[RMDB]
RNA sequence: GGGAACGACUCGAGUAGAGUCGAAAAACACGGAGUACGCUCCGCGACAACACUUCUUUCGACCCGCUAACCGAGACCUAUGGGUCGUUAAAUUACGUCUCUAUCUUACUCACAUAACAUCGCACAAAAAACGUGGUUCGGUUCGCCGAACCACGAACGAUGACCGUGUGUUCGCACACGGUCAUCGAAAAGAAACAACAACAACAAC
Reactivity to 2A3 in 0.01 (KOAc 150mM, MgCl2 10mM, bicine 150mM(pH8.5), 24C), signal-to-noise 1, nucleotides 027 to 156: a000c080a010c010g010g000a010g050u090a010c120g000c120u000c000c010g070c000g100a010c030a150a000c010a070c090u210u200c070u160u210u120c000g010a010c040c000c000g030c100u120a030a030c000c050g010a000g020a050c000c010u040a050u210g000g000g010u020c000g050u010u010a010a010a010u170u090a010c000g020u000c000u030c020u020a100u100c000u010u150a100c070u130c030a000c000a180u210a140a040c090a180u060c120g070c070a050c100a120a000a060a100a030a000c070g000u000g040g000u030u000c000g000g040u000u070c180g020c070c000g000a000a000c000c000a000c000g000a000a000
Structure probing data (2A3) for a 207-nucleotide construct. 2A3 adducts were read by reverse transcription with SuperScript II with manganese. Reactivities are given for positions 27 through 156. The 2A3 profile rests on 451 reads.